An RNA of 177 nucleotides, treated with DMS and read out base by base. The DMS profile rests on 1,817 reads. The RNA was probed in 150 mM KOAc, 10 mM MgCl2 and 150 mM bicine (pH 8.5) at 24 C.
RNA sequence: GGGAACGACUCGAGUAGAGUCGAAAAUACAAGAAGGGGGGACGGAGAAGGCUAUGUUGGCCGGGCGACGGUUGUCCCGGUUUAUGCGUGUAGGCUGGUUUUCCAGGCAAAUCCGGAAGAAAAUGAACUAGAAGUCAAUGUUCGCAUUGACUUCUAGAAAAGAAACAACAACAACAAC
Reactivity to DMS in 0.01 (KOAc 150mM, MgCl2 10mM, bicine 150mM(pH8.5), 24C), signal-to-noise 2, nucleotides 027 to 126: u000a080c110a080a110g020a110a070g000g000g010g020g010g030a060c050g010g000a080g000a140a090g010g000c050u000a050u020g030u000u000g000g010c000c030g010g000g030c300g000a060c140g000g020u010u010g000u010c030c000c010g010g000u000u000u010a030u000g020c050g010u000g020u010a070g010g000c050u000g000g000u000u010u010u000c020c020a110g000g000c060a050a030a070u000c010c040g000g000a090a100g000a060a040a080a090u010g010a080a140